[RMDB]
RNA sequence: GGGAACGACUCGAGUAGAGUCGAAAAGCCACUUACGGACACUCCGUCUGACGUACAGUCUCACUCGCAUGACUAGUCAAAGUCAUGACUGUGAGCGAGUACGACUGAUGGUCAGUUCGAGUGUGGAAAAUCAGGGUACCUUCGGGUACCCUGAUUUAAAAGAAACAACAACAACAAC
Reactivity to 2A3 in 0.01 (KOAc 150mM, MgCl2 10mM, bicine 150mM(pH8.5), 24C), signal-to-noise 1, nucleotides 027 to 126: g030c010c000a040c050u100u210a060c020g070g000a010c000a010c070u010c010c030g010u000c010u010g000a020c000g020u110a010c010a030g100u050c000u000c040a010c010u060c030g000c010a050u080g010a070c010u060a020g100u100c050a140a210a000g100u040c010a040u050g020a080c010u030g010u010g030a000g000c010g000a010g000u010a000c040g000a030c010u070g020a030u110g000g030u000c010a050g010u010u030c010g010a050g000u030g000u020g030g070a090
Reactivity to DMS in 0.01 (KOAc 150mM, MgCl2 10mM, bicine 150mM(pH8.5), 24C), signal-to-noise 2, nucleotides 027 to 126: g030c020c000a050c070u010u010a110c110g010g000a050c000a300c090u000c020c040g000u000c000u000g000a020c000g000u000a030c000a120g010u010c010u010c080a020c000u000c080g000c010a050u000g010a040c030u010a070g040u000c270a100a080a070g010u000c090a010u010g020a030c030u000g010u000g000a060g030c040g000a120g020u000a040c110g000a070c010u000g000a010u000g000g010u010c050a120g010u000u000c050g040a160g020u000g010u000g000g020a080